[RMDB]
RNA sequence: GGGAACGACUCGAGUAGAGUCGAAAAUGACAAGACCAUCUACAACUUCGGUGACAUGACCCGAAAUAUCGGUAUGUUCACCAACGCCGGUAUCAAGCUUGAAGAUGCUACAGCCAUGAUUAAGGGUUUCUCCAACGAAGCCGCUAUGUCAGGUACGGUCAGAUAGUGGAUUCGUCCACUAUCUGACAAAAGAAACAACAACAACAAC
Reactivity to 2A3 in 0.01 (KOAc 150mM, MgCl2 10mM, bicine 150mM(pH8.5), 24C), signal-to-noise 6, nucleotides 027 to 156: u100g040a030c040a060a050g020a070c020c010a040u050c040u130a090c060a120a040c040u100u100c100g010g030u020g040a060c030a070u110g110a100c010c040c060g070a070a140a060u250a070u060c010g010g010u050a060u100g050u080u130c060a010c000c010a000a010c030g010c010c020g020g000u030a040u080c030a070a000g050c030u050u060g030a050a020g010a040u040g010c030u050a050c040a040g010c010c010a130u040g020a040u080u140a050a090g010g020g020u020u030u000c060u070c090c050a090a100c120g010a010a010g000c010c030g060c130u060a080u150g010u020c010a000g040g020u070a040c100g040
Reactivity to DMS in 0.01 (KOAc 150mM, MgCl2 10mM, bicine 150mM(pH8.5), 24C), signal-to-noise 2, nucleotides 027 to 156: u000g000a080c050a100a030g010a190c060c020a090u000c000u000a180c060a050a060c010u000u000c060g020g050u020g000a080c030a070u000g010a170c110c000c040g020a090a120a100u000a030u000c060g010g030u000a040u000g030u000u000c080a120c130c050a050a030c060g000c020c030g010g010u000a030u010c070a090a090g030c040u000u000g010a070a110g040a120u000g020c020u000a090c050a070g030c020c000a030u000g000a110u000u050a120a110g000g000g000u010u000u000c040u000c070c140a050a060c080g020a040a060g010c000c000g030c030u000a060u000g020u010c020a100g020g030u000a090c120g020